[RMDB]
RNA sequence: GGGAACGACUCGAGUAGAGUCGAAAAUUUGUGGACAGGGAGUAUGAUUUAAGCAUACUGUCCAUCAGUUGGAGUCAUUUCUGAAUCAUUGGCUCACAAUUUACACACAUUGCUCUGGGCUUCAGAAAAAAUACGCAAGUUUCGACUUGCGUAUUUUAAAAGAAACAACAACAACAAC
Reactivity to 2A3 in 0.01 (KOAc 150mM, MgCl2 10mM, bicine 150mM(pH8.5), 24C), signal-to-noise 1, nucleotides 027 to 126: u090u060u070g000u000g000g000a020c040a110g080g100g010a160g090u120a060u100g080a120u090u200u300a200a040g000c010a000u000a040c040u070g060u070c000c000a020u040c040a000g030u040u020g000g000a020g000u000c030a070u020u110u050c120u110g160a040a050u050c070a060u100u040g030g040c000u050c010a130c010a020a010u090u130u230a100c150a000c030a000c040a020u010u180g110c060u100c090u070g000g140g000c000u120u030c100a020g000a010a200
Reactivity to DMS in 0.01 (KOAc 150mM, MgCl2 10mM, bicine 150mM(pH8.5), 24C), signal-to-noise 5, nucleotides 027 to 126: u000u000u020g040u000g000g010a080c110a110g010g010g010a110g020u010a010u000g000a100u010u010u010a100a190g000c010a000u000a040c010u000g000u010c010c010a090u000c160a060g010u000u000g000g010a060g010u000c020a050u000u000u000c150u020g010a120a100u010c150a060u010u010g020g010c010u000c010a080c040a020a010u000u000u010a130c170a140c080a040c110a070u000u000g000c090u000c050u010g010g000g010c090u000u010c050a080g010a000a010

An RNA of 177 nucleotides, treated with 2A3 and DMS and read out base by base. High 2A3 reactivity points to a flexible backbone, as in loops and unpaired stretches. Reactivities are given for positions 27 through 126. 2A3 adducts were read by reverse transcription with SuperScript II with manganese. Conditions: 150 mM KOAc, 10 mM MgCl2 and 150 mM bicine (pH 8.5), 24 C. The DMS profile rests on 4,446 reads.